[RMDB]
RNA sequence: GGGAACGACUCGAGUAGAGUCGAAAAACAGCCAACAUCAUACUGAAUGGGCAAAAGCUGGAAGUGUGACCCUUGACAACCAGCAAAGACAAGGAUGCUCUCUCUCACUACUCCUAUUCAACUUAGUAUUAUAAGUCCUGGCCAGAGCAAUCAGGCAUCACCCCUGGUGAUUCGUCACCAGGGGUGAAAAAGAAACAACAACAACAAC
Reactivity to 2A3 in 0.01 (KOAc 150mM, MgCl2 10mM, bicine 150mM(pH8.5), 24C), signal-to-noise 1, nucleotides 027 to 156: a000c070a000g070c030c000a050a020c010a060u080c000a010u100a200c040u070g070a100a060u070g010g010g010c030a090a050a070a000g020c050u040g000g020a070a090g030u000g060u100g140a100c000c000c010u010u040g090a100c070a030a030c030c000a000g060c050a040a030a000g030a000c020a050a020g080g010a050u080g030c020u000c000u010c000u000c000u000c000a000c050u080a040c020u060c030c000u040a070u090u110c030a110a090c040u070u040a130g020u140a100u120u000a190u000a150a000g020u040c030c040u000g060g000c000c020a020g000a010g070c000a000a030u040c020a000g000g060c000a020
Structure probing data (2A3) for a 207-nucleotide construct. The reactions ran in a buffer of 150 mM KOAc, 10 mM MgCl2 and 150 mM bicine (pH 8.5), at 24 C. It was measured as part of the RMDB library OK3TST. Reactivities are given for positions 27 through 156.